[RMDB]
RNA sequence: GGGAACGACUCGAGUAGAGUCGAAAAGUAACAGCUCACCCGCCGAGACUCGGGGCGCCGAAAAUGGACGGGGCUCAAGCCGGCCGCCGAUACCCCGGGGCUCCGAAAGGAGAUCCGGUAGGGGGGCAUUAGUCACGGAGUUCGCUCCGUGACUAAUAAAAGAAACAACAACAACAAC
Reactivity to DMS in 0.01 (KOAc 150mM, MgCl2 10mM, bicine 150mM(pH8.5), 24C), signal-to-noise 1, nucleotides 027 to 126: g010u040a050a170c080a120g000c000u000c010a010c000c000c020g000c010c010g000a120g060a170c040u000c030g000g000g010g030c030g000c020c050g010a050a120a150a130u060g000g000a200c030g000g010g000g000c020u010c120a170a080g020c060c120g000g000c000c010g000c050c030g060a100u080a100c000c050c190c030g000g000g010g000c000u000c000c010g000a080a120a070g030g000a120g000a220u000c030c000g000g000u040a040g000g000g000g000g010g000c010
Reactivity to 2A3 in 0.01 (KOAc 150mM, MgCl2 10mM, bicine 150mM(pH8.5), 24C), signal-to-noise 2, nucleotides 027 to 126: g080u060a130a100c020a040g040c000u000c020a060c000c000c000g000c010c000g150a180g040a090c020u000c040g000g060g000g010c060g050c000c030g150a150a050a060a160u210g010g060a010c020g030g000g030g000c000u010c200a090a090g030c010c020g020g000c000c030g120c010c000g000a030u120a120c010c000c000c000g000g000g060g000c000u010c000c010g140a080a010a000g100g020a020g000a000u030c030c000g000g000u080a070g030g000g000g000g000g000c000
Chemical mapping of a 177-nucleotide RNA with DMS and 2A3. The 2A3 profile rests on 757 reads. The DMS profile rests on 1,392 reads. High DMS reactivity at an A or C suggests that its Watson-Crick edge is free. Reactivities are given for positions 27 through 126. Conditions: 150 mM KOAc, 10 mM MgCl2 and 150 mM bicine (pH 8.5), 24 C. Source: RMDB library RFM100, as collected in RNAgym.